[RMDB]
An RNA of 177 nucleotides, treated with 2A3 and DMS and read out base by base.
RNA sequence: GGGAACGACUCGAGUAGAGUCGAAAAUGCCCUUCCCGAUUCCGUCCAUCCCCACUCCCAGAGGGUCGCCCAGGAAUGGCGGGACCCCACUUCAGCAGGGUCCGCGUUCCAUCCUUUCUUACCUGAUACAUUUAGCUUUGUUCGCAAAGCUAAAUGUAAAAGAAACAACAACAACAAC
Reactivity to 2A3 in 0.01 (KOAc 150mM, MgCl2 10mM, bicine 150mM(pH8.5), 24C), signal-to-noise 2, nucleotides 027 to 126: u150g020c010c010c000u030u010c000c000c000g020a120u120u070c020c030g030u060c030c020a130u030c010c020c000c010a050c030u000c020c000c020a030g040a070g050g030g020u010c000g000c000c000c000a010g080g090a020a010u110g300g300c080g050g040g040a020c020c000c000c000a040c030u170u160c060a080g040c010a050g040g020g000u030c020c030g020c000g030u000u000c010c000a050u070c000c000u140u140u020c050u090u100a130c000c030u020g000a050u000
Reactivity to DMS in 0.01 (KOAc 150mM, MgCl2 10mM, bicine 150mM(pH8.5), 24C), signal-to-noise 2, nucleotides 027 to 126: u010g020c010c000c010u000u010c000c000c000g010a140u010u000c020c030g000u000c040c030a090u000c010c010c000c040a130c080u010c010c020c030a080g010a190g000g010g020u000c060g000c010c010c030a130g000g000a030a060u000g030g030c020g010g000g000a050c010c000c000c040a070c100u000u020c160a120g050c090a100g010g000g000u000c010c000g010c010g010u000u000c000c010a110u000c040c040u000u000u000c080u000u010a140c070c040u000g020a280u000
Conditions: 150 mM KOAc, 10 mM MgCl2 and 150 mM bicine (pH 8.5), 24 C. Reactivities are rounded to 0.1 and cut off at 0 and 3. DMS adducts were read by reverse transcription with MarathonRT. Source: RMDB library VIROID, as collected in RNAgym. Values cover nucleotides 27 to 126.